[RMDB]
RNA sequence: GGGAACGACUCGAGUAGAGUCGAAAAGCGGCCUUCGACGCUGGACCCGGCGGUCGACCCCGAAGGGGCCCAUGCCCGCUGGAAUUGGGUACUCGACGGCAUGGUGGAAACCAAGGCUCUCUCGCCGGUGAAAUCCCAGGUUCGCCUGGGAUUUCACAAAAGAAACAACAACAACAAC
Reactivity to 2A3 in 0.01 (KOAc 150mM, MgCl2 10mM, bicine 150mM(pH8.5), 24C), signal-to-noise 2, nucleotides 027 to 126: g030c030g000g040c010c000u050u030c080g000a000c070g000c050u010g070g000a120c060c070c000g000g000c040g000g080u050c040g040a190c030c030c000c030g010a080a160g050g000g020g000c030c020c000a000u080g000c000c070c050g290c230u130g030g050a080a150u050u070g000g000g030u090a300c000u000c060g020a100c010g020g010c030a040u090g000g020u070g080g070a040a010a000c020c000a130a000g010g000c000u000c000u000c000u020c040g070c050c020g030
Reactivity to DMS in 0.01 (KOAc 150mM, MgCl2 10mM, bicine 150mM(pH8.5), 24C), signal-to-noise 1, nucleotides 027 to 126: g020c070g000g010c110c040u000u000c250g000a000c080g010c040u000g000g040a300c110c010c030g000g000c170g000g030u000c070g000a080c130c090c000c030g000a130a160g000g000g050g000c090c160c000a000u000g030c300c010c020g000c220u030g000g040a090a120u000u010g000g010g090u120a030c110u000c090g030a300c080g000g000c150a080u000g030g000u030g020g070a130a030a110c010c000a090a030g020g030c000u000c030u030c000u000c000g000c080c030g000